The record gives the reactivity of an RNA of 177 nucleotides to DMS. The DMS profile rests on 1,166 reads.
RNA sequence: GGGAACGACUCGAGUAGAGUCGAAAAUCUAGGAUGUUCGCAUCCUAGAAAAUACCGAGACUCAACCUCGGUAGAGUUGAGUUACCCUUGGAAACAAGGGAAAAAGAUGGGGCUUCGGCCCCAUCAAGAAUUCUAAGCAGUUCGCUGCUUAGAAUUCAAAAGAAACAACAACAACAAC
Reactivity to DMS in 0.01 (KOAc 150mM, MgCl2 10mM, bicine 150mM(pH8.5), 24C), signal-to-noise 2, nucleotides 027 to 126: u000c000u010a010g010g010a000u010g030u010u010c160g010c020a010u000c000c000u000a000g000a010a030a120a160u030a060c030c010g010a120g000a020c020u010c020a040a020c110c040u000c140g000g010u000a020g010a130g010u010u000g000a040g010u000u010a180c010c000c000u000u010g000g000a160a110a170c000a000a000g000g000g000a030a070a040a100a070g000a010u000g000g000g010g020c020u010u030c270g050g010c000c000c000c000a000u000c010a020a090
Reactivities are given for positions 27 through 126. Conditions: 150 mM KOAc, 10 mM MgCl2 and 150 mM bicine (pH 8.5), 24 C.